[RMDB]
RNA sequence: GGGAACGACUCGAGUAGAGUCGAAAACUUGAACUUCAUUAUGACAUGGAUUCUAUUGCUCACGUUUGUUGCUGACCUUCUCCUUAUUAUCACCCUGCCCUCCUACUACAUUCCUUUUUGCUGAAAUAAUGAAGAUAAUAAUCAAUAAAAACUGAGACACUGAUCCUAUGUUCGCAUAGGAUCAGUGAAAAGAAACAACAACAACAAC
Reactivity to 2A3 in 0.01 (KOAc 150mM, MgCl2 10mM, bicine 150mM(pH8.5), 24C), signal-to-noise 1, nucleotides 027 to 156: c030u050u140g020a050a010c020u030u000c010a040u070u030a050u100g070a050c070a090u150g050g000a120u090u050c030u240a230u070u240g030c010u010c060a060c110g040u050u050u050g070u040u070g000c030u000g070a030c030c010u030u040c010u010c030c030u060u060a070u130u100a040u170c060a030c020c000c050u040g040c010c030c000u090c020c020u030a050c010u040a000c000a300u000u000c000c000u070u030u040u120u120g100c080u060g040a000a000a210u140a010a030u120g030a000a030g070a010u120a130a020u100a020a010u090c020a020a020u080a160a040a060a000a000c060u080g000a100g050a040
Reactivity to DMS in 0.01 (KOAc 150mM, MgCl2 10mM, bicine 150mM(pH8.5), 24C), signal-to-noise 1, nucleotides 027 to 156: c060u010u000g000a070a100c030u000u000c060a070u000u010a120u000g000a140c070a170u040g000g020a110u000u010c060u050a040u000u020g010c010u000c030a130c130g000u010u000u000g040u000u000g000c010u040g020a110c080c060u010u000c030u010c040c030u020u010a120u010u000a090u000c070a120c040c010c000u000g020c000c020c020u000c030c020u010a060c050u000a070c110a170u000u000c000c020u010u030u020u000u000g020c060u030g000a110a110a070u000a050a030u000g010a030a070g050a170u010a040a040u010a050a130u010c000a030a120u010a080a040a050a070a160c050u010g020a160g000a250